[RMDB]
RNA sequence: GGGAACGACUCGAGUAGAGUCGAAAACGCGGAUCACUGGCGUCCAGCGGAGAAACAGGAGCUCGUCUCCUUCCUUUCGCUGCUGGCUCCACAUCCGAUCGUCGCUGAAGCUUCAACCCCAUACCGCUUUUCUUAAAUCUUCACUGCUCUCCGGGCGCACUUGUCCUUUGUUCGCAAAGGACAAGUGAAAAGAAACAACAACAACAAC
Reactivity to 2A3 in 0.01 (KOAc 150mM, MgCl2 10mM, bicine 150mM(pH8.5), 24C), signal-to-noise 3, nucleotides 027 to 156: c050g000c010g010g000a000u000c000a000c060u000g010g000c020g040u100c020c010a000g010c010g100g030a030g000a040a040a160c300a230g000g000a010g000c080u130c300g300u180c100u000c000c000u010u020c000c000u000u000u010c010g010c030u010g000c000u000g000g000c000u000c000c000a010c000a000u010c000c000g010a140u070c010g040u010c010g010c130u100g040a060a000g020c010u130u130c060a080a110c000c000c000c040a040u080a140c050c070g050c160u090u100u170u090c060u080u240a080a140a120u080c030u120u160c050a050c100u100g000c000u000c000u000c070c040g030g000g000c040g020
An RNA of 207 nucleotides, treated with 2A3 and read out base by base.
The reactions ran in a buffer of 150 mM KOAc, 10 mM MgCl2 and 150 mM bicine (pH 8.5), at 24 C.